[RMDB]
The record gives the reactivity of an RNA of 207 nucleotides to 2A3 and DMS. For DMS the reverse transcriptase was MarathonRT.
RNA sequence: GGGAACGACUCGAGUAGAGUCGAAAAUUUUGAGGUGUGAGUAGAGGAGGGCCAGGAAUUCUACUCAAGGGAAAUAAUCCAAAAGGAAGAAAUCAGUCUACACAAAGUUAUAGUGUUACUAUUCACAACUGUGAAACACUGGAAGUUACCUAAAUGCUAAUCAGUUCGUAUUCGUACGAACUGAUUAAAAAGAAACAACAACAACAAC
Reactivity to 2A3 in 0.01 (KOAc 150mM, MgCl2 10mM, bicine 150mM(pH8.5), 24C), signal-to-noise 2, nucleotides 027 to 156: u200u130u020u070g030a030g030g000u010g000u050g030a100g020u040a010g030a010g070g000a020g010g080g000c030c020a020g030g030a080a060u100u090c030u030a010c000u000c080a070a040g040g010g000a050a180a050u090a060a050u070c010c080a010a090a020a000g020g020a020a060g000a040a060a030u030c000a020g030u000c030u150a050c050a000c010a110a060a020g010u050u080a090u060a100g030u030g010u060u060a050c050u100a140u110u110c030a010c010a200a120c110u040g000u000g010a000a000a040c000a010c040u010g020g030a020a040g060u050u060a090c000c010u050a090a060a090u230g000c060
Reactivity to DMS in 0.01 (KOAc 150mM, MgCl2 10mM, bicine 150mM(pH8.5), 24C), signal-to-noise 2, nucleotides 027 to 156: u000u000u000u000g010a130g030g020u010g000u010g000a120g020u000a130g010a110g020g000a090g030g020g030c020c040a060g040g020a080a040u000u000c010u010a100c030u000c000a110a110g010g000g000a090a040a190u000a060a130u010c070c030a010a140a130a280g000g020a070a100g000a080a090a070u010c010a090g010u000c010u000a060c020a120c040a100a070a110g000u020u000a090u000a120g000u010g000u010u000a070c040u000a080u000u000c050a010c100a060a060c110u000g000u010g010a140a080a060c030a060c010u000g000g020a070a040g030u000u000a010c030c010u010a040a070a130u010g020c170
Reactivities are given for positions 27 through 156.